Description:
The record gives the reactivity of an RNA of 177 nucleotides to DMS.
RNA sequence: GGGAACGACUCGAGUAGAGUCGAAAAGAAAUUCUCCAGCCUGACCAGGUGGUGAGUUGCGGUGUUGUCUACCGUAGAGGAUUUCUCUCGUGCCUUGUUACGGGUUUGAAGGGCGAGCCUAUCUUCGGAAUCAGUCUUUCUUCGGAAAGACUGAUUCAAAAGAAACAACAACAACAAC
Reactivity to DMS in 0.01 (KOAc 150mM, MgCl2 10mM, bicine 150mM(pH8.5), 24C), signal-to-noise 2, nucleotides 027 to 126: g020a030a010a050u000u000c010u000c000c030a200g000c000c030u000g010a170c300c250a060g000g040u030g010g010u000g040a070g020u010u010g020c020g010g000u020g010u000u000g020u010c150u010a050c000c020g020u000a050g020a030g010g000a030u000u000u010c020u010c010u000c010g030u000g010c010c000u000u000g000u000u010a140c090g000g010g020u000u000u000g000a070a040g010g010g010c020g010a010g000c020c000u000a040u000c050u010u010c280g000